Chemical mapping of a 177-nucleotide RNA with 2A3 and DMS. It was measured as part of the RMDB library OK1LIB. The 2A3 profile rests on 2,842 reads. For 2A3 the reverse transcriptase was SuperScript II with manganese. As a SHAPE reagent, 2A3 marks flexible, mostly unpaired nucleotides at the ribose 2'-OH.
[RMDB]
RNA sequence: GGGAACGACUCGAGUAGAGUCGAAAAUCUGCCGUCUGAACCGGCGGAAUACCUGCUCUCGAAGGCGAAGGUGGCGCUGUCGCCUGGCAUUCCGUUCGGCGCCGCGGUGGGCUCGGGAUUUGCGCGGCUCCUCGGUGGUAUUCGUACCACCGAGGAGAAAAGAAACAACAACAACAAC
Reactivity to 2A3 in 0.01 (KOAc 150mM, MgCl2 10mM, bicine 150mM(pH8.5), 24C), signal-to-noise 3, nucleotides 027 to 126: u030c010u020g030c010c010g040u070c120u170g080a080a050c010c010g010g010c000g000g010a000a000u000a060c020c030u040g050c000u040c030u040c130g090a120a040g020g000c020g000a030a010g040g030u070g040g000c020g010c070u050g020u090c010g010c000c040u000g000g020c040a050u100u060c010c010g020u110u250c060g020g000c010g020c000c020g000c000g000g020u060g010g000g000c000u020c030g010g010g050a090u060u100u140g040c040g000c000g040g010
Reactivity to DMS in 0.01 (KOAc 150mM, MgCl2 10mM, bicine 150mM(pH8.5), 24C), signal-to-noise 2, nucleotides 027 to 126: u020c020u000g000c010c030g000u020c080u050g030a120a210c110c010g040g030c020g000g030a000a100u010a040c050c000u000g000c110u010c000u030c000g040a250a090g020g000c050g040a060a070g010g010u000g030g000c050g000c020u000g010u000c040g000c040c000u000g020g000c050a060u010u000c020c030g050u000u000c040g000g030c160g000c080c120g040c060g000g000u020g000g040g040c000u000c090g010g010g010a100u000u050u000g000c050g000c040g000g020